Structure probing data (2A3) for a 207-nucleotide construct.

RNA sequence: GGGAACGACUCGAGUAGAGUCGAAAAUGGCCUAAGAUGACCAAAGUGAGGGCAUCAACACCUUACAUGCAACUGAUCAUUAUGCCUAAGGUGCUUUGUGGUGAGUUUGAGAAGAGUCCAAAUUAGGUCAAGGAAAUGGUGGCUCUACACCGCAGCACACGUCGGAGGAUUUCGAUCCUCCGACGUGAAAAGAAACAACAACAACAAC
Reactivity to 2A3 in 0.01 (KOAc 150mM, MgCl2 10mM, bicine 150mM(pH8.5), 24C), signal-to-noise 1, nucleotides 027 to 156: u030g050g000c000c000u070a050a010g000a080u130g010a030c030c090a000a050a020g030u050g050a030g000g000g000c050a080u080c040a110a000c050a130c040c000u080u070a000c000a040u240g050c000a020a130c000u030g030a050u060c000a030u010u080a000u090g030c030c030u050a060a060g100g060u070g000c020u080u190u020g000u000g000g030u000g080a050g000u000u170u150g050a060g000a080a040g030a010g000u000c010c000a030a020a020u040u080a000g090g000u000c000a000a010g050g070a110a080a030u160g020g120u130g030g000c010u040c030u170a040c020a010c000c000g020c090a000g000c000a000

For 2A3 the reverse transcriptase was SuperScript II with manganese. Conditions: 150 mM KOAc, 10 mM MgCl2 and 150 mM bicine (pH 8.5), 24 C.